Annotation
The record gives the reactivity of an RNA of 177 nucleotides to DMS and 2A3. For 2A3, 829 sequencing reads were counted. The DMS profile rests on 4,473 reads. Values cover nucleotides 27 to 126. 2A3 adducts were read by reverse transcription with SuperScript II with manganese.

RNA sequence: GGGAACGACUCGAGUAGAGUCGAAAAUUAGCAGUUGGAUUGUUCAACUUUAUUAAUGAUAAGUAUGCAAAUAAUUUCACAGUGUUUGCAGCAGGGGCAAUUAUGAUUGCAGUACCUAUAGCAAUCGUACCACCUUGAAGUUCGCUUCAAGGUGGUAAAAAGAAACAACAACAACAAC
Reactivity to DMS in 0.01 (KOAc 150mM, MgCl2 10mM, bicine 150mM(pH8.5), 24C), signal-to-noise 3, nucleotides 027 to 126: u030u040a060g030c150a070g020u000u000g000g000a080u000u000g010u010u000c020a110a060c020u000u000u030a160u020u010a090a060u030g000a130u000a070a030g020u010a130u020g010c020a040a000a020u020a020a060u020u040u000c230a080c250a100g000u000g000u010u000u000g010c020a000g020c190a060g040g010g000g000c090a050a010u000u000a060u010g010a020u000u000g030c020a110g000u030a130c110c020u000a040u050a090g000c040a020a020u000c010g000
Reactivity to 2A3 in 0.01 (KOAc 150mM, MgCl2 10mM, bicine 150mM(pH8.5), 24C), signal-to-noise 2, nucleotides 027 to 126: u150u100a010g190c080a010g050u050u020g030g040a080u020u060g000u170u100c050a070a050c060u100u050u030a170u040u120a060a140u080g140a020u030a110a090g070u070a090u110g000c020a000a000a030u090a150a080u130u170u300c060a080c070a070g040u030g000u070u010u010g000c010a010g000c000a000g000g010g000g010c000a000a010u030u070a070u270g000a010u010u000g000c000a010g060u090a020c000c010u040a010u060a140g030c050a000a020u070c010g030